[RMDB]
RNA sequence: GGGAACGACUCGAGUAGAGUCGAAAAAGUCCAUGCAAGGGGACACACACACAGAGAGUGAAGGACGAGUGUGUGUGUGCGGGCGGUGCACGGCUCUCUCACUCACUCUCACGCGGCCACCACCGCCACCUAGGAGCGAGUUCGCUCGCUCCUAGGUAAAAGAAACAACAACAACAAC
Reactivity to DMS in 0.01 (KOAc 150mM, MgCl2 10mM, bicine 150mM(pH8.5), 24C), signal-to-noise 2, nucleotides 027 to 126: a110g000u040c010c020a060u050g000c190a180a080g000g000g000g010a150c040a000c020a000c000a010c010a140c060a160g010a060g020a060g030u050g000a060a130g000g010a140c300g010a040g020u000g030u000g000u000g010u010g000u000g000c090g000g010g020c010g000g010u000g000c060a070c180g000g000c030u020c050u030c030u000c050a140c070u070c020a090c130u000c020u020c070a140c120g000c040g010g010c060c000a070c210c070a040c000c030g040c020c030
Reactivity to 2A3 in 0.01 (KOAc 150mM, MgCl2 10mM, bicine 150mM(pH8.5), 24C), signal-to-noise 3, nucleotides 027 to 126: a000g060u000c010c020a050u160g100c070a090a120g030g020g010g080a000c000a000c000a000c010a000c000a000c030a010g040a000g010a010g090u050g090a220a080g150g060a050c110g020a010g060u020g000u000g000u000g010u010g000u000g040c020g000g060g000c010g080g010u040g000c050a050c170g040g000c010u010c000u000c000u000c080a070c040u100c000a010c010u010c010u020c010a080c060g100c080g020g010c000c000a020c050c000a000c000c010g000c000c000